[RMDB]
RNA sequence: GGGAACGACUCGAGUAGAGUCGAAAAGCCCAGUGCUGGCACGUGAAGCUGGAGUUCAGUUCAGUGAAGCGCCAGUAAACGGCGGGGGUAACUAUAACCCUCUUAAGGUAGCGAAAUGCCUUGUCGGGAAUCCACCCCAUUUCGAUGGGGUGGAUUCAAAAGAAACAACAACAACAAC
Reactivity to 2A3 in 0.01 (KOAc 150mM, MgCl2 10mM, bicine 150mM(pH8.5), 24C), signal-to-noise 2, nucleotides 027 to 126: g010c000c000c050a030g000u050g000c000u000g020g000c020a030c180g030u040g060a030a000g000c000u010g010g070a020g000u260u130c050a020g080u080u020c000a010g000u000g130a190a000g020c000g030c000c000a000g000u030a000a050a000c000g030g000c020g020g000g030g000g000u010a070a000c030u000a050u070a300a000c000c000c000u010c000u000u030a010a000g040g020u030a000g190c050g200a030a000a140u040g000c010c030u020u040g090u050c090g040g010
Reactivity to DMS in 0.01 (KOAc 150mM, MgCl2 10mM, bicine 150mM(pH8.5), 24C), signal-to-noise 1, nucleotides 027 to 126: g010c000c000c000a300g060u000g040c040u000g000g000c030a100c080g000u030g000a170a300g000c000u000g010g000a050g030u000u080c190a110g010u000u000c000a020g000u000g000a200a200g060c020g000c040c000a010g030u000a000a060a090c040g010g130c000g000g000g000g000g000u000a100a270c170u000a190u010a080a040c040c000c000u000c060u020u040a020a000g000g000u000a110g000c130g000a040a030a080u090g000c000c000u000u000g000u010c020g040g040